[RMDB]
RNA sequence: GGGAACGACUCGAGUAGAGUCGAAAAGAUAUGGAGUCAGAACUACUUCACAACAGACUCAAAACGAGUUUACCGUCGGAAACGACGGUAAACUCAUCAAGUCUGUGUGAAGCUGACUCCUAAGUCACAUAACUAAUGAGUUCGCUCAUUAGUUAUGAAAAGAAACAACAACAACAAC
Reactivity to DMS in 0.01 (KOAc 150mM, MgCl2 10mM, bicine 150mM(pH8.5), 24C), signal-to-noise 6, nucleotides 027 to 126: g000a020u000a120u010g000g000a030g010u000c000a010g000a070a030c050u020a300c010u000u000c000a000c000a240a050c010a000g000a020c000u010c150a100a070a080a140c140g000a000g010u000u000u000a000c000c000g010u000c000g000g000a030a020a060c000g020a020c000g020g010u000a000a000a000c000u000c000a010u000c130a080a170g000u000c000u000g030u000g010u000g000a020a000g000c000u000g000a010c000u000c000c000u000a000a040g000u000c010a300
Reactivity to 2A3 in 0.01 (KOAc 150mM, MgCl2 10mM, bicine 150mM(pH8.5), 24C), signal-to-noise 4, nucleotides 027 to 126: g010a000u030a020u100g000g000a000g000u010c020a000g020a070a030c090u300a060c010u300u020c010a000c010a300a210c000a050g030a010c020u070c300a140a220a100a170c120g000a000g000u000u000u010a000c000c000g000u000c000g040g000a030a020a020c010g010a000c000g000g020u000a000a000a000c000u000c000a000u020c000a000a000g000u020c000u000g000u010g000u000g000a000a000g010c000u010g000a000c000u010c000c000u000a000a010g000u000c000a000
Chemical mapping of a 177-nucleotide RNA with DMS and 2A3. DMS adducts were read by reverse transcription with MarathonRT. 2A3 adducts were read by reverse transcription with SuperScript II with manganese. Values cover nucleotides 27 to 126. The RNA was probed in 150 mM KOAc, 10 mM MgCl2 and 150 mM bicine (pH 8.5) at 24 C.